[RMDB]
Structure probing data (2A3 and DMS) for a 177-nucleotide construct. Reactivities are given for positions 27 through 126. The RNA was probed in 150 mM KOAc, 10 mM MgCl2 and 150 mM bicine (pH 8.5) at 24 C. The data come from the RNA Mapping Database (RMDB), library TTRDEL. For 2A3 the reverse transcriptase was SuperScript II with manganese. For 2A3, 2,142 sequencing reads were counted.

RNA sequence: GGGAACGACUCGAGUAGAGUCGAAAAGAUAUGGAGCAAGAUCGCUGAACAUAUGGGUCGGAAACGACCCUAUGAUACGAAUAAGAUUGAUGACCUCCUAAGUCCGAUGGGCGAUUCGUCGCCCAAAUGUGAGUUUACGAUUCGUCGUAAACUCACAAAAAGAAACAACAACAACAAC
Reactivity to 2A3 in 0.01 (KOAc 150mM, MgCl2 10mM, bicine 150mM(pH8.5), 24C), signal-to-noise 2, nucleotides 027 to 126: g020a000u100a000u120g010g000a020g010c020a050a120g070a060u010c000g060c240u250g110a130a020c000a010u060a080u210g000g000g000u010c000g040g000a070a020a020c000g000a000c010c020c000u000a000u000g010a020u040a080c080g010a110a020u300a190a090g040a020u050u110g090a140u160g090a130c030c030u020c010c010u020a080a010g020u000c020c000g060a180u170g000g000g010c020g000a000u050u020c180g030u020c030g160c000c020c030a000a010a000
Reactivity to DMS in 0.01 (KOAc 150mM, MgCl2 10mM, bicine 150mM(pH8.5), 24C), signal-to-noise 3, nucleotides 027 to 126: g000a060u000a230u010g020g010a030g020c000a120a190g010a040u000c010g020c170u000g060a160a150c000a020u000a010u020g020g000g000u010c010g010g000a080a070a160c020g000a020c000c000c000u000a010u000g000a100u010a120c180g000a090a080u010a110a150g000a040u010u000g010a130u010g000a130c300c010u000c000c010u010a080a150g000u010c000c000g020a100u010g000g020g020c030g010a040u000u010c160g000u000c000g000c010c000c000a000a010a030